[RMDB]
RNA sequence: GGGAACGACUCGAGUAGAGUCGAAAACCGCCCACACGCUUACGCGGCGCGGCCAGCAGCAACGGCCCGCAAAGUCCAGGAUGUCGUGCUCCUCGCCGUCGAGGUAUACCUUGGGCGCGCGCUCGGCCGUGCCGAUGUGAACGCCGCGGCGGCAAGCCUGCACAAAGACAUUCGUGUCUUUGUGCAGAAAAGAAACAACAACAACAAC
Reactivity to 2A3 in 0.01 (KOAc 150mM, MgCl2 10mM, bicine 150mM(pH8.5), 24C), signal-to-noise 2, nucleotides 027 to 156: c030c000g020c020c010c010a070c000a000c020g030c000u070u050a020c020g000c010g030g010c000g000c020g040g010c010c010a010g010c020a010g010c040a020a160c030g040g010c000c000c030g060c050a080a120a000g060u050c040c070a010g010g050a100u140g040u080c010g020u050g040c010u040c030c010u070c020g060c070c030g120u130c050g000a030g000g010u070a050u100a240c020c000u050u060g040g030g000c020g000c040g000c000g010c010u130c110g000g000c000c000g010u000g000c000c000g010a010u000g000u010g010a030a020c020g040c080c020g000c110g000g000c010g000g030c020a030a010g030c010